[RMDB]
RNA sequence: GGGAACGACUCGAGUAGAGUCGAAAAGAAAACCCCAACAAGGAUCACUGGCCAGAGGCAAAUCAGGUAGGAGUGGGAGCAUUCGGGCCAGGGUUCACCCCACCACACGGCGGUCUUUUGGGGUGGAGCCCUCAGGCUCAGGGCAUAUUAACAACAGUGCCAGCAGCACCUCCUCCUGCCUCCACCAAUCGGCAGUCAGGAAGACAGCCUACUCCCAUCUCUCCACCUCUAAGAGACAGUCAUCCUCAGGCCAUGCAGAAAAAGAAAGCUUAGCAUUCGUGCUAAGCAAAAGAAACAACAACAACAAC
Reactivity to DMS in 0.01 (KOAc 150mM, MgCl2 10mM, bicine 150mM(pH8.5), 24C), signal-to-noise 1, nucleotides 027 to 266: g030a180a120a260a230c190c000c020c090a080a190c250a140a140g030g040a110u000c080a090c030u000g030g020c020c000a060g020a030g020g000c300a050a170a110u060c140a030g020g000u000a040g040g000a060g030u000g000g000g030a030g040c100a200u010u010c220g000g050g000c010c020a000g010g000g030u000u000c010a090c000c070c010c000a120c210c040a100c100a040c110g040g050c050g000g000u020c090u030u000u070u000g030g000g020g030u000g040g000a000g020c000c000c010u010c140a080g000g000c000u000c020a070g000g000g000c000a050u000a070u020u010a190a110c210a100a070c110a080g000u000g000c030c010a130g060c060a150g000c000a060c070c100u000c060c020u000c150c000u000g000c000c020u000c120c060a060c180c200a130a090u000c150g000g010c020a020g010u000c050a060g000g030a010a030g020a140c070a100g000c030c090u000a170c010u000c010c000c020a080u020c030u020c000u000c020c020a120c000c000u000c240u000a020a090g060a060g040a110c130a070g000u020c140a060u010c000c020u000c010a070g030g000c000c020a000u000g000c080a160g000a010a070a130a110a100g000a060a180a080
Reactivity to 2A3 in 0.01 (KOAc 150mM, MgCl2 10mM, bicine 150mM(pH8.5), 24C), signal-to-noise 3, nucleotides 027 to 266: g070a010a140a020a040c020c000c010c010a010a070c050a080a010g010g030a060u120c040a020c090u030g010g030c030c010a020g010a010g020g010c070a090a080a160u160c050a100g050g020u070a110g020g010a010g000u040g000g000g010a030g010c020a100u150u240c140g000g030g000c000c020a020g010g000g000u010u010c000a020c000c000c010c000a020c010c040a030c030a010c090g220g140c110g090g020u110c090u120u240u160u200g030g000g000g000u040g030g040a040g100c000c000c020u030c080a050g000g000c000u000c010a010g020g020g000c030a020u090a100u300u220a170a090c120a050a030c030a050g000u000g030c000c030a030g050c030a000g010c010a150c010c020u020c000c000u010c010c000u000g010c000c000u010c000c010a140c020c020a070a100u160c050g010g000c000a010g030u070c020a010g020g070a080a010g020a030c030a010g000c000c000u010a020c010u010c000c010c000a150u070c020u000c020u000c050c010a020c010c000u020c010u140a160a040g060a000g020a070c010a040g040u040c020a050u010c010c000u010c050a020g030g000c010c020a030u070g050c030a010g270a100a130a050a010a010g240a060a090a070